[RMDB]
RNA sequence: GGGAACGACUCGAGUAGAGUCGAAAAAUUACGGGCGGCGCAGGUGGAGCUGCGAUCCCUCCGCCGAUCGCGUGCUCUCUCGGUGGCCCAGACGCUGCAAACGGACAGGCGGGCCACCUGCAACGAACUUUAGCGAUACUUUCGAGUAUCGCUAAAGAAAAGAAACAACAACAACAAC
Reactivity to DMS in 0.01 (KOAc 150mM, MgCl2 10mM, bicine 150mM(pH8.5), 24C), signal-to-noise 4, nucleotides 027 to 126: a060u000u000a100c140g000g000g010c010g020g010c050g040c140a130g000g020u010g000g010a030g020c100u010g010c040g000a050u010c050c080c010u000c020c020g010c020c040g020a130u010c030g010c010g020u000g000c040u000c010u000c070u000c090g020g030u000g010g000c010c000c000a080g020a070c070g020c010u010g000c060a090a120a150c250g010g030a160c030a050g000g000c070g000g010g000c020c000a010c000c010u010g030c100a040a070c100g000a060a130